RNA sequence: GGGAACGACUCGAGUAGAGUCGAAAAUCCUGCGACUAGAGCUCCUAGGAGCCAGCAGGUUGUCCAGAGUGGGAUUCAGUGUAAUAAAAUAGUAUCACACUUCUGUUAGAUAUGUUCUGCUCUUUUUCUCUCAAGGUUUUUUGCUUUGGAACCCCUAAUUAAUAUCAGGAUUCGUCCUGAUAUUAAUAAAAGAAACAACAACAACAAC
Reactivity to 2A3 in 0.01 (KOAc 150mM, MgCl2 10mM, bicine 150mM(pH8.5), 24C), signal-to-noise 2, nucleotides 027 to 156: u030c000c000u030g000c000g060a040c040u140a120g030a110g100c020u020c000c020u100a190g100g070a000g050c020c000a000g030c000a000g030g000u050u070g020u050c000c000a010g000a000g020u020g000g050g010a040u060u030c040a040g070u000g030u120a100a190u040a100a170a030a030u100a040g090u020a000u090c010a020c000a010c000u140u240c020u080g140u110u080a040g020a060u020a030u080g050u040u000c020u080g060c000u000c000u120u190u050u120u070c090u000c020u050c110a060a140g020g040u060u020u020u040u290u270g010c010u070u060u030g050g030a130a130c000c020c000c000u020a020
Reactivity to DMS in 0.01 (KOAc 150mM, MgCl2 10mM, bicine 150mM(pH8.5), 24C), signal-to-noise 1, nucleotides 027 to 156: u000c000c010u000g030c140g020a150c040u010a050g010a290g000c040u010c020c020u000a230g030g000a030g020c000c030a210g000c040a070g020g030u000u000g010u030c060c030a140g000a100g000u010g030g000g010a020u000u010c070a120g040u010g060u000a040a120u000a050a090a090a150u000a110g010u000a020u000c040a040c030a030c030u010u010c060u020g020u010u010a110g010a100u010a010u000g010u000u010c030u000g000c040u000c020u040u000u000u000u020c090u010c080u010c080a080a130g000g020u000u000u000u000u000u000g010c020u010u000u000g010g000a040a160c020c020c010c050u010a100

Chemical mapping of a 207-nucleotide RNA with 2A3 and DMS. Source: RMDB library OK3TST, as collected in RNAgym. The DMS profile rests on 1,901 reads. For 2A3 the reverse transcriptase was SuperScript II with manganese. Reactivities are given for positions 27 through 156.